[RMDB]
RNA sequence: GGGAACGACUCGAGUAGAGUCGAAAAACGUCAACGUUACUGCUUCUGAAGACAGCCGUACUGUUGGUGCAAGUGGAAUGGUGGGUGAUCGCUUUAGUUACGGCGCUUCUGUGUCACAUCAAGACUAGAUGAUGAUUUACUUCGGUAAAUCAUCAUCAAAAGAAACAACAACAACAAC
Reactivity to 2A3 in 0.01 (KOAc 150mM, MgCl2 10mM, bicine 150mM(pH8.5), 24C), signal-to-noise 3, nucleotides 027 to 126: a000c060g030u050c030a040a020c030g030u060u050a030c020u030g030c010u070u000c030u190g120a100a070g050a070c040a020g020c000c000g020u030a020c020u050g070u120u070g050g000u070g050c050a110a010g050u090g090g080a130a080u080g030g020u050g020g010g030u040g030a040u070c020g030c010u070u090u100a030g020u060u050a040c030g010g020c020g000c030u040u000c010u060g060u030g020u050c000a020c020a130u100c040a090a050g090a050c010u060a060
Reactivity to DMS in 0.01 (KOAc 150mM, MgCl2 10mM, bicine 150mM(pH8.5), 24C), signal-to-noise 5, nucleotides 027 to 126: a100c100g020u010c040a030a070c060g010u000u010a040c080u000g010c030u000u000c090u000g020a090a100g000a100c180a070g010c000c050g010u000a060c040u000g000u000u000g010g000u000g010c090a060a110g020u000g020g000a080a070u000g000g010u000g000g010g010u010g010a070u010c070g000c040u010u000u000a080g020u020u010a050c090g000g000c030g020c050u000u000c030u000g000u000g020u000c040a060c110a100u010c160a060a140g000a050c110u000a130